[RMDB]
RNA sequence: GGGAACGACUCGAGUAGAGUCGAAAACAAGCUAUGAUGUGCGACCUUGACAUAAGGAUUGAGUAUCAACGUAGCUACUCCAGCAACUUCGCCAUUGUAUACCGCCGUUAAACUACUGCGGCAGCGAACGCCCGCCAGCGUUCGCGCUGGCGGGCGUAAAAGAAACAACAACAACAAC
Reactivity to 2A3 in 0.01 (KOAc 150mM, MgCl2 10mM, bicine 150mM(pH8.5), 24C), signal-to-noise 1, nucleotides 027 to 126: c190a010a000g000c000u000a000u000g000a070u210g160u090g000c000g000a070c040c000u070u060g160a160c180a180u300a000a000g000g000a100u130u270g180a180g000u000a000u240c030a000a000c160g030u000a000g000c000u000a040c000u030c010c000a010g010c070a000a030c000u000u000c000g010c010c020a110u170u080g130u000a160u060a070c010c040g000c000c000g060u100u180a260a000a000c300u300a000c000u010g000c000g000g000c000a000g010c040g000a010
About this RNA:
An RNA of 177 nucleotides, treated with 2A3 and read out base by base. It was measured as part of the RMDB library OK1LIB. Values are in units of 0.01, from 0 to 300, in steps of 10.